RNA sequence: GGGAACGACUCGAGUAGAGUCGAAAAGAUAUGGACAUCCUGUAGGGAGCUGCUCGUGGUCGGAAACGACCACUCAGCAUCGAUCUACACAUGGAUGUCCUAAGUCAAAGGGAGCUUCGGCUCCCAACAUUAGGACUUCCUUCGGGAAGUCCUAAUGAAAAGAAACAACAACAACAAC
Reactivity to DMS in 0.01 (KOAc 150mM, MgCl2 10mM, bicine 150mM(pH8.5), 24C), signal-to-noise 4, nucleotides 027 to 126: g010a040u010a300u000g020g000a000c010a000u000c000c000u010g020u000a020g010g000g010a300g000c190u000g000c020u000c300g020u000g010g000u010c000g030g010a110a120a130c020g010a000c000c000a000c000u000c110a000g040c000a020u000c020g000a300u000c000u010a020c000a080c300a080u000g020g020a020u010g000u000c010c000u010a000a060g010u000c030a100a130a120g000g000g010a010g030c010u000u020c240g040g000c000u000c010c000c020a010a050
Reactivity to 2A3 in 0.01 (KOAc 150mM, MgCl2 10mM, bicine 150mM(pH8.5), 24C), signal-to-noise 2, nucleotides 027 to 126: g030a020u120a060u200g000g000a000c000a000u000c010c030u050g000u010a010g010g040g030a050g010c020u010g000c020u060c120g040u010g000g000u000c040g030g020a060a080a000c000g000a010c010c000a010c020u070c030a000g000c000a010u120c010g000a010u010c010u010a010c050a000c060a250u280g000g010a000u000g000u010c000c000u000a030a020g030u030c040a040a120a110g040g000g000a020g010c010u120u180c300g170g000c000u040c010c010c000a010a000